[RMDB]
RNA sequence: GGGAACGACUCGAGUAGAGUCGAAAAAUUUAAAGGCCAGGACGGUCACCUUUGGGGUGGUGACAAGUGUGAUCACUUGGGUGGUGGCUGUGUUUGCGCCUCUCCCAGGAAUCUCGUUUACCAGAUCAUAGUAAUGAGUCUUCGGACUCAUUACUAUAAAAGAAACAACAACAACAAC
Reactivity to 2A3 in 0.01 (KOAc 150mM, MgCl2 10mM, bicine 150mM(pH8.5), 24C), signal-to-noise 5, nucleotides 027 to 126: a000u160u200u170a160a170a000g030g000c020c000a010g040g020a030c020g010g000u030c000a010c030c000u110u120u170g090g000g020g000u010g000g010u030g030a010c020a070a140g180u160g030u030g250a030u060c000a000c000u020u040g230g000g030u070g060g060u010g000g000c000u010g010u020g080u030u060u060g100c110g010c020c000u000c010u000c000c000c010a010g050g020a050a030u060c040u000c050g030u040u050u070a160c030c010a050g010a090u130c030
Reactivity to DMS in 0.01 (KOAc 150mM, MgCl2 10mM, bicine 150mM(pH8.5), 24C), signal-to-noise 2, nucleotides 027 to 126: a060u030u030u030a080a070a040g000g000c010c000a020g000g010a010c000g010g000u000c020a000c010c010u000u030u010g020g000g030g010u000g010g020u020g000a030c020a200a120g030u030g010u020g000a050u000c040a020c000u000u000g000g000g010u010g020g020u000g020g000c010u010g020u000g010u030u000u010g000c130g030c000c000u000c060u000c000c000c010a240g000g000a070a020u010c060u010c020g000u000u010u010a060c060c040a100g000a120u040c210